[RMDB]
RNA sequence: GGGAACGACUCGAGUAGAGUCGAAAAGUCGUCAUCCCUGGCCAGCCUCCGGAGUUCCUCUUCUUCCUCUCGGCUGAGGUUCUUCCCCCCUCCGGCCAGUUGCUUCUUCUUGUUCUCGAGGGCCUUCACGGUGUACUGUUCGCAGUACACAAAAGAAACAACAACAACAAC
Reactivity to 2A3 in 0.01 (KOAc 150mM, MgCl2 10mM, bicine 150mM(pH8.5), 24C), signal-to-noise 9, nucleotides 027 to 129: g030u030c020g030u030c030a090u060c030c010c010u020g040g010c010c020a010g010c020c010u050c020c020g040g010a050g020u060u030c010c010u020c000u060u000c010u070u030c010c010u020c000u020c020g060g000c040u030g020a050g050g000u050u040c010u040u040c000c010c000c000c000c000u010c010c010g010g010c000c000a020g020u040u060g060c010u020u040c000u030u010c000u030u070g060u100u020c010u000c020g020a050g000g020g010c010c000u070u070c080a070c080g060
Reactivity to DMS in 0.01 (KOAc 150mM, MgCl2 10mM, bicine 150mM(pH8.5), 24C), signal-to-noise 8, nucleotides 027 to 129: g010u020c030g020u020c100a090u010c020c000c030u000g000g040c060c080a080g030c030c010u020c030c030g010g020a130g010u010u010c020c030u010c030u000u000c050u010u010c000c000u000c030u000c040g030g040c050u000g020a100g000g000u020u010c040u000u020c000c010c000c030c020c010u020c010c070g000g000c010c020a060g000u000u000g000c020u000u000c000u040u000c060u020u010g020u020u010c030u010c000g020a090g000g000g000c010c000u020u020c080a090c110g030